[RMDB]
RNA sequence: GGGAACGACUCGAGUAGAGUCGAAAAGAUAUGGAUUGUAUAGCUAGCUGCUCGGAAACGAGACAGCUUGGACCUAUCACAAUCCUAAGUCAAAACGACCGAUCUAGCUUCGGCUAGAUCGGUCGAAGUAUAUCCAACUGUUCGCAGUUGGAUAUACAAAAGAAACAACAACAACAAC
Reactivity to DMS in 0.01 (KOAc 150mM, MgCl2 10mM, bicine 150mM(pH8.5), 24C), signal-to-noise 5, nucleotides 027 to 126: g010a040u000a300u010g000g000a010u000u010g010u000a020u000a010g000c030u010a020g010c000u000g000c010u000c010g000g000a100a080a130c000g000a000g000a120c000a010g010c010u010u010g010g000a110c300c000u000a010u000c210a020c000a000a010u000c000c000u000a040a090g010u010c010a090a070a140a220c010g000a000c000c000g000a010u000c000u000a010g000c000u000u010c240g010g000c000u000a000g000a000u000c000g000g010u000c000g000a000a030
Reactivity to 2A3 in 0.01 (KOAc 150mM, MgCl2 10mM, bicine 150mM(pH8.5), 24C), signal-to-noise 2, nucleotides 027 to 126: g030a020u060a020u080g000g000a000u000u010g000u000a000u000a010g030c020u010a010g000c010u010g000c000u000c010g030g020a060a050a040c030g000a000g170a270c000a000g000c010u000u020g010g070a070c020c000u010a010u040c090a000c000a010a020u000c000c000u010a170a030g060u010c020a030a030a120a180c020g000a000c020c030g010a000u000c000u000a010g030c010u020u110c300g100g000c020u010a000g000a010u000c000g000g000u010c010g000a010a000